The data come from the RNA Mapping Database (RMDB), library OK3TST. Chemical mapping of a 207-nucleotide RNA with DMS and 2A3. 2A3 is a SHAPE reagent: it acylates the 2'-hydroxyl of flexible nucleotides of all four kinds.
[RMDB]
RNA sequence: GGGAACGACUCGAGUAGAGUCGAAAAAUUUACUUGGUGUUGAUGUGUCUGAUGAAGACUUUUACAAUGCUGUUAGUAAUGCGCAUAGGUUUAACAUAUUGUUGUCAGAUUUGUCUUUCAAUAAUGUUGUGACUACAUAUGCGAAACCAGAGGAAAACUGACAUUACCCAUUCGUGGGUAAUGUCAGAAAAGAAACAACAACAACAAC
Reactivity to DMS in 0.01 (KOAc 150mM, MgCl2 10mM, bicine 150mM(pH8.5), 24C), signal-to-noise 2, nucleotides 027 to 156: a060u000u000u000a030c000u000u010g010g000u000g050u010u020g000a130u000g020u010g010u000c000u010g000a240u000g010a150a070g010a040c010u000u010u020u000a090c040a080a070u000g000c010u000g020u000u000a040g020u000a080a050u000g030c020g020c040a030u000a030g030g000u000u000u000a110a030c010a050u020a040u000u000g050u000u010g010u010c070a020g010a110u000u010u000g030u000c010u000u020u010c020a010a070u000a030a020u010g010u000u000g030u000g000a130c040u000a030c020a040u000a020u000g010c000g010a120a090a110c030c030a120g010a210g020g000a100a050a120a180
Reactivity to 2A3 in 0.01 (KOAc 150mM, MgCl2 10mM, bicine 150mM(pH8.5), 24C), signal-to-noise 2, nucleotides 027 to 156: a000u030u050u000a010c000u010u070g010g010u020g010u010u010g030a100u060g040u010g010u040c010u000g070a090u130g060a100a020g010a030c000u090u030u020u040a050c000a000a000u000g000c000u000g020u110u010a010g000u000a020a040u110g010c010g000c000a000u010a030g020g040u010u030u110a020a000c000a000u040a000u010u030g000u000u000g020u000c000a010g020a100u070u180u280g200u070c010u020u000u010c000a010a020u030a040a020u020g070u140u040g030u080g000a010c010u020a010c060a050u020a010u000g010c000g020a070a010a010c060c000a030g090a090g150g070a070a000a010a030

For 2A3 the reverse transcriptase was SuperScript II with manganese.